[RMDB]
RNA sequence: GGGAACGACUCGAGUAGAGUCGAAAACAGGUAAGUACACAAUUCUCUAAGCGAUGAGAAGCGUGUGGAAAAUUAGGGACGGGCUACGGCUAUAAUCCUAAGAAAGCUUAUCUACAAGCGGAGGUAUAAAAGCUCGCAGCGUUCGCGCUGCGAGCAACAUCCUAAUAGGGUUCGCCCUAUUAGGAUGAAAAGAAACAACAACAACAAC
Reactivity to 2A3 in 0.01 (KOAc 150mM, MgCl2 10mM, bicine 150mM(pH8.5), 24C), signal-to-noise 1, nucleotides 027 to 156: c030a000g000g000u050a010a050g060u070a020c000a000c040a140a120u030u000c010u010c020u070a220a150g050c050g090a090u060g010a100g000a010a010g010c040g050u050g000u020g000g000a050a100a030a050u050u030a000g000g000g060a020c140g040g020g060c020u060a030c130g050g000c010u010a010u050a170a090u050c000c000u020a060a000g040a020a040a000g030c000u010u000a050u080c000u000a030c030a090a020g030c030g040g060a020g060g090u060a070u030a160a220a020a000g000c010u010c010g050c010a030g040c010g060u070u120c190g010c010g070c070u030g000c000g010a010g000c000a000a000

Annotation: This 207-nucleotide RNA was probed chemically with 2A3. Source: RMDB library M2RFPK, as collected in RNAgym. Values cover nucleotides 27 to 156. 2A3 adducts were read by reverse transcription with SuperScript II with manganese.